RNA sequence: GGGAACGACUCGAGUAGAGUCGAAAACUGGCCCUUCUCAGCGGUGUCAUCUAUGUGAUCUUGCGGAAACGCGAAUGAGGCGCCCAGACGGUCUGUCUGAGGCUCUGAGCGUACAUAGGGAAGGGAGGAAGGGAAAACAGAAAGCAGACAAAGAAAAGAUAUAGACGAGCUUCGGCUCGUCUAUAUCAAAAGAAACAACAACAACAAC
Reactivity to 2A3 in 0.01 (KOAc 150mM, MgCl2 10mM, bicine 150mM(pH8.5), 24C), signal-to-noise 1, nucleotides 027 to 156: c040u090g010g000c000c000c000u000u010c020u000c040a050g030c020g160g000u280g080u080c000a000u000c040u300a180u300g060u030g010a020u060c060u100u220g100c000g140g010a010a120a020c030g010c020g010a060a070u160g030a010g050g030c050g000c000c000c000a000g000a000c060g150g300u170c130u160g010u000c000u010g020a070g030g000c000u000c000u020g010a010g000c010g000u030a030c040a040u080a040g000g000g000a020a010g020g030g030a000g020g060a000a000g000g000g050a170a020a000a000c030a040g070a070a060a000g140c110a010g010a030c110a040a090a010g160a140a070a040a270
Background
Conditions: 150 mM KOAc, 10 mM MgCl2 and 150 mM bicine (pH 8.5), 24 C. This 207-nucleotide RNA was probed chemically with 2A3. High 2A3 reactivity points to a flexible backbone, as in loops and unpaired stretches. It was measured as part of the RMDB library OK3TST.